[RMDB]
RNA sequence: GGGAACGACUCGAGUAGAGUCGAAAAUUCCGGCUAACGUGGAGCGCGGGCAGGAGAACUAUAUGGGCUUUAUCUCGGCACUCAAGCUUCUCGUGACGGAGGUGCCCAGCACCGAGGUCUAUCAGGCGGGGCCCCACUACUUUUUGCAAAGCAGCCGCACCCUACAAAAUUUCGAUUUUGUAGGGUGAAAAGAAACAACAACAACAAC
Reactivity to 2A3 in 0.01 (KOAc 150mM, MgCl2 10mM, bicine 150mM(pH8.5), 24C), signal-to-noise 1, nucleotides 027 to 156: u100u020c020c000g000g080c060u060a100a060c050g010u040g020g010a070g030c060g000c090g010g000g000c030a100g000g090a010g030a060a020c080u070a020u060a140u300g040g070g010c030u100u170u090a040u060c020u000c000g030g000c050a090c160u130c030a050a060g030c040u070u040c020u000c000g040u040g000a000c020g000g030a020g010g000u070g030c020c040c110a010g010c050a020c010c020g020a010g040g060u000c050u090a100u130c070a030g060g000c030g040g020g000g000c010c040c020c010a020c020u170a110c050u140u160u070u220u180g130c080a090a100a120g030c000a020g030c020c070g000